[RMDB]
RNA sequence: GGGAACGACUCGAGUAGAGUCGAAAAGUCACUCAUCCAAACUCAGGUGCCUGAAGACACGGCUGCAGGGCGGUGCACGUACAUGGAGCUGGCACGCACACACGCAAGUGCACAGGCCGGUACCCACAUAAAGGUCGAUUUUCGAAUCGACCUUUAUAAAAGAAACAACAACAACAAC
Reactivity to DMS in 0.01 (KOAc 150mM, MgCl2 10mM, bicine 150mM(pH8.5), 24C), signal-to-noise 2, nucleotides 027 to 126: g020u020c060a080c040u000c050a080u010c040c070a030a110a100c100u010c080a120g030g020u000g020c030c020u000g000a110a080g000a150c120a060c070g000g020c050u000g010c060a050g000g000g020c050g000g000u010g010c030a020c070g000u010a060c120a060u030g000g000a170g020c050u010g000g010c030a060c050g020c040a040c080a130c130a030c150g010c110a090a100g020u000g000c020a090c070a110g000g000c000c020g000g000u000a070c020c020c030a080c190
Reactivity to 2A3 in 0.01 (KOAc 150mM, MgCl2 10mM, bicine 150mM(pH8.5), 24C), signal-to-noise 1, nucleotides 027 to 126: g020u000c010a060c070u030c010a090u030c030c030a080a010a110c060u040c040a020g070g070u030g130c020c090u090g050a110a020g080a060c000a000c160g000g060c030u040g010c040a020g000g020g040c020g010g000u010g000c050a010c100g040u120a010c060a130u120g060g020a050g040c020u050g080g020c070a020c090g010c000a040c020a000c000a000c100g040c050a120a060g000u020g000c040a000c020a060g050g000c040c000g000g000u040a040c010c060c010a080c020
Description
Chemical mapping of a 177-nucleotide RNA with DMS and 2A3. The data come from the RNA Mapping Database (RMDB), library OK2TRN. For DMS the reverse transcriptase was MarathonRT. The RNA was probed in 150 mM KOAc, 10 mM MgCl2 and 150 mM bicine (pH 8.5) at 24 C. The 2A3 profile rests on 1,017 reads. Reactivities are given for positions 27 through 126.